The data come from the RNA Mapping Database (RMDB), library RFM100. Chemical mapping of a 177-nucleotide RNA with 2A3. The RNA was probed in 150 mM KOAc, 10 mM MgCl2 and 150 mM bicine (pH 8.5) at 24 C.

RNA sequence: GGGAACGACUCGAGUAGAGUCGAAAAAACAGAGAGCUUCCAUCACAGACCGACUUUAACCUUGCCGUUCACCACCGAUUCCGGUGACAAGAGUCAUCGUCGAUAUUAAUUCGUUCAGUAAAUUUUGGAUCUAAUUGGCGUUCGCGCCAAUUAGAUCAAAAGAAACAACAACAACAAC
Reactivity to 2A3 in 0.01 (KOAc 150mM, MgCl2 10mM, bicine 150mM(pH8.5), 24C), signal-to-noise 1, nucleotides 027 to 126: a000a000c120a090g090a000g000a000g060c000u040u010c000c000a120u070c040a010c000a090g090a070c050c050g010a020c080u140u060u040a060a130c000c000u000u020g000c020c000g000u000u020c100a140c170c030a010c010c000g000a000u030u030c000c000g000g000u000g070a000c030a190a110g140a010g080u050c000a000u000c000g140u040c010g000a010u000a090u120u060a070a130u290u180c060g010u090u020c070a060g090u190a000a000a300u010u000u000u100g050